An RNA of 207 nucleotides, treated with DMS and 2A3 and read out base by base.
Source: RMDB library RNAMAK, as collected in RNAgym.
For 2A3, 14,021 sequencing reads were counted.
RNA sequence: GGGAACGACUCGAGUAGAGUCGAAAAGGAUCACGUUCGCGUGAUCCAAAAAGCGUACUACACGAGGUGUAGGGAGUGCGUGUCCCAAAUAGGACACGUGCACGACGAUCUACACUACCCACCGUGUAUCGCAAAAAGAUUCGCUUCGGCGAAUCAACCUAAAUUAAUACUUCGGUAUUAAUUUAGGAAAAGAAACAACAACAACAAC
Reactivity to DMS in 0.01 (KOAc 150mM, MgCl2 10mM, bicine 150mM(pH8.5), 24C), signal-to-noise 3, nucleotides 027 to 156: g020g010a000u000c000a000c000g030u000u010c300g020c040g060u000g010a020u000c000c000a030a020a040a090a110g030c000g020u000a070c060u000a000c000a030c010g000a070g040g010u000g000u000a010g020g010g000a050g040u000g000c010g010u000g000u000c000c010c010a040a190a170u010a030g000g020a020c000a000c000g030u000g030c020a040c050g010a110c150g010a090u000c000u020a030c010a010c000u000a030c010c010c030a290c080c020g000u000g000u000a030u000c010g000c030a040a080a070a130a080g000a030u000u000c000g020c010u000u000c300g050g000c000g020a010a000u000c010a050a100
Reactivity to 2A3 in 0.01 (KOAc 150mM, MgCl2 10mM, bicine 150mM(pH8.5), 24C), signal-to-noise 7, nucleotides 027 to 156: g010g000a000u000c000a010c020g010u070u080c200g030c010g130u010g000a010u000c000c000a000a000a000a010a000g050c050g030u090a090c030u010a010c020a000c020g010a010g000g020u000g000u000a010g000g020g010a050g010u010g000c000g000u000g000u010c000c010c010a140a170a060u210a060g000g000a000c020a000c050g090u160g040c040a010c020g220a050c020g010a010u000c000u010a000c010a010c020u060a090c020c020c020a060c030c020g000u010g010u010a070u300c030g000c030a020a060a010a030a010g000a000u000u000c000g000c000u030u080c200g100g000c000g000a000a000u000c010a000a030